About this RNA:
Chemical mapping of a 207-nucleotide RNA with 2A3. High 2A3 reactivity points to a flexible backbone, as in loops and unpaired stretches. 2A3 adducts were read by reverse transcription with SuperScript II with manganese. The reactions ran in a buffer of 150 mM KOAc, 10 mM MgCl2 and 150 mM bicine (pH 8.5), at 24 C. It was measured as part of the RMDB library VIROID. For 2A3, 2,371 sequencing reads were counted. Reactivities are given for positions 27 through 156.
[RMDB]
RNA sequence: GGGAACGACUCGAGUAGAGUCGAAAAGGGGAGUGCCCAGCGGCCGACAGGAGUAAUUCCCGCCGAAACAGGGUUUUCACCCUUCCUUUCUUCGGGUGUCCUUCCUCGCGCCCGCAGGACCACCCCUCGCCCCCUUUGCGCUGUCGCUUCGGCUACUCACUUUUAUUAUGUUCGCAUAAUAAAAGUGAAAAGAAACAACAACAACAAC
Reactivity to 2A3 in 0.01 (KOAc 150mM, MgCl2 10mM, bicine 150mM(pH8.5), 24C), signal-to-noise 2, nucleotides 027 to 156: g020g010g010g000a090g000u140g100c000c000c000a030g000c000g000g000c000c010g010a060c200a140g020g010a010g040u090a020a030u110u010c000c000c000g010c010c030g000a030a020a050c300a110g010g040g000u070u110u280u300c150a040c000c000c000u030u000c000c000u000u000u000c000u030u020c000g000g000g000u010g000u000c010c010u010u020c000c000u010c000g000c040g000c060c020c020g000c010a010g000g010a000c000c030a090c020c010c010c000u000c000g050c020c000c000c010c000u070u210u180g050c110g030c070u080g090u230c020g010c000u120u050c080g030g000c020u070a040c010u010